[RMDB]
RNA sequence: GGGAACGACUCGAGUAGAGUCGAAAACUAAUUUCUUUGAAAUAAAGAGGAAUUAUGAUUCAGAGGGCUAUUGCACCAGUCAGUCUAACAUGACUAAAGAUUGGUGGUUAAUUCAAAUGUCAGCAAAUUACAAUCAGGGUUAUCACGGUUAUAGCUAACCUCAUUGGAGAUUCGUCUCCAAUGAGGUAAAAGAAACAACAACAACAAC
Reactivity to 2A3 in 0.01 (KOAc 150mM, MgCl2 10mM, bicine 150mM(pH8.5), 24C), signal-to-noise 2, nucleotides 027 to 156: c010u020a020a050u050u020u050c020u000u050u100g140a170a160a110u210a140a210a110g010a030g030g030a020a020u070u050a080u160g050a110u080u120c090a050g010a050g080g020g060c030u060a040u120u160g010c020a000c000c000a020g010u000c000a010g000u000c010u050a190a110c060a140u230g000a000c000u010a080a090a090g000a000u000u000g000g000u010g000g010u040u040a070a040u080u070c080a040a060a060u090g020u020c030a000g000c050a080a050a090u050u090a110c030a040a030u060c020a040g020g000g020u130u030a030u080c070a000c110g020g070u020u090a060u050a060g000c000u010a050
Reactivity to DMS in 0.01 (KOAc 150mM, MgCl2 10mM, bicine 150mM(pH8.5), 24C), signal-to-noise 1, nucleotides 027 to 156: c110u010a040a040u000u000u000c000u000u000u000g000a100a160a190u040a140a050a140g010a010g010g000a070a040u000u000a030u000g000a170u000u000c060a110g000a050g010g000g040c020u000a070u000u000g080c050a030c000c020a060g000u000c010a040g000u020c030u010a160a150c190a120u000g010a000c030u000a050a090a190g020a020u020u000g030g000u010g010g010u000u000a070a130u000u000c070a110a050a080u010g010u010c020a060g040c050a050a050a120u010u000a100c010a080a080u010c040a120g010g000g040u000u010a060u020c030a080c000g010g020u000u000a080u000a070g050c030u010a110